This 177-nucleotide RNA was probed chemically with 2A3.
RNA sequence: GGGAACGACUCGAGUAGAGUCGAAAAGAAGACGGGGAACAGGCAGAGCAUGGAUGGAGCUACUAACAGAAGUACUUGUUUUGGCUCUACCCAUGCACUGCCUCUUCCCUGGCUUGUGGCUCUUCCUACUAGUCGUGGCAUUCGUGCCACGACUAGUAAAAGAAACAACAACAACAAC
Reactivity to 2A3 in 0.01 (KOAc 150mM, MgCl2 10mM, bicine 150mM(pH8.5), 24C), signal-to-noise 2, nucleotides 027 to 126: g150a000a010g010a010c010g000g000g020g000a000a000c000a000g000g020c020a010g020a000g000c000a000u000g000g000a010u020g010g000a000g050c000u030a050c040u020a020a020c010a000g090a280a020g230u180a130c110u120u080g010u020u000u000u040g020g010c000u000c010u000a000c020c000c010a000u010g000c000a010c000u000g000c010c010u010c020u000u000c000c000c000u010g020g000c000u090u120g080u060g090g000c030u020c000u040u030c000c000u000
For 2A3, 1,689 sequencing reads were counted.